[RMDB]
RNA sequence: GGGAACGACUCGAGUAGAGUCGAAAACAAGUUAUCCAGGUGUUAAGAAAUUACAGCGUGUUUACCGUCGCUAACGAAAACAUACAACCUCACGAUCCUUCUGCCAACACAAACAAUUUGAACACUCUGCAAGCAGUUAGUUCGCUAACUGCUUGCAAAAAGAAACAACAACAACAAC
Reactivity to 2A3 in 0.01 (KOAc 150mM, MgCl2 10mM, bicine 150mM(pH8.5), 24C), signal-to-noise 2, nucleotides 027 to 126: c090a030a030g020u030u060a050u080c020c000a050g000g000u060g050u040u050a140a040g050a070a080a130u140u080a070c050a040g020c010g010u030g000u070u070u080a120c080c000g040u060c030g020c000u000a020a000c040g060a020a050a180a010c030a020u170a040c050a060a090c020c000u020c020a030c040g020a050u020c000c010u020u030c020u050g050c000c030a080a000c070a010c000a090a110a000c020a060a140u120u090u200g010a040a010c000a030c050u020c060
Reactivity to DMS in 0.01 (KOAc 150mM, MgCl2 10mM, bicine 150mM(pH8.5), 24C), signal-to-noise 1, nucleotides 027 to 126: c180a110a060g000u000u000a050u040c000c000a070g020g000u000g020u000u000a070a010g000a020a070a210u000u010a070c130a080g000c080g060u050g000u030u030u070a060c020c000g000u000c070g000c060u000a000a020c200g000a100a060a120a040c080a150u050a130c070a060a030c090c040u000c000a060c000g010a150u030c050c050u000u000c110u000g000c050c120a000a070c100a000c160a180a040a000c110a050a000u140u080u010g000a040a100c120a020c080u000c180
Structure probing data (2A3 and DMS) for a 177-nucleotide construct. The 2A3 profile rests on 1,005 reads. It was measured as part of the RMDB library OK1LIB. Reactivities are rounded to 0.1 and cut off at 0 and 3. Conditions: 150 mM KOAc, 10 mM MgCl2 and 150 mM bicine (pH 8.5), 24 C.